[RMDB]
RNA sequence: GGGAACGACUCGAGUAGAGUCGAAAAUGCUCGCGGAACUGAUGCAGUGGGAGGCGACCGAUUGAAGCCAAUUGCAGACAUCAUGUGUGACUGAGUAUUGGUGUAGGCGAUAGCCUAAAAUCACCCGCUAAGGUUACCGCUUCGGCGGUAACCUUAGAAAAGAAACAACAACAACAAC
Reactivity to 2A3 in 0.01 (KOAc 150mM, MgCl2 10mM, bicine 150mM(pH8.5), 24C), signal-to-noise 2, nucleotides 027 to 126: u090g000c000u000c010g030c010g150g090a060a030c030u080g010a010u020g010c010a000g050u110g000g000g030a000g000g000c030g010a050c000c080g150a100u000u210g150a040a030g000c000c000a000a020u060u040g000c010a000g060a080c000a030u030c050a180u280g140u050g010u030g080a070c000u000g030a040g020u070a030u010u000g030g030u150g010u030a010g000g000c030g080a140u110a070g000c000c000u010a020a000a000a080u030c000a010c010c000c000g010
Reactivity to DMS in 0.01 (KOAc 150mM, MgCl2 10mM, bicine 150mM(pH8.5), 24C), signal-to-noise 1, nucleotides 027 to 126: u000g000c040u000c050g040c000g020g020a110a010c060u030g000a090u000g010c090a090g000u000g000g000g010a270g000g000c000g040a160c110c110g000a080u010u000g000a170a220g020c000c000a000a150u040u090g030c000a000g010a180c010a030u000c040a020u000g000u050g010u000g010a070c040u040g040a130g000u000a000u000u000g060g000u000g000u000a110g000g030c000g030a120u000a090g020c010c000u010a000a030a150a010u000c080a060c010c000c010g020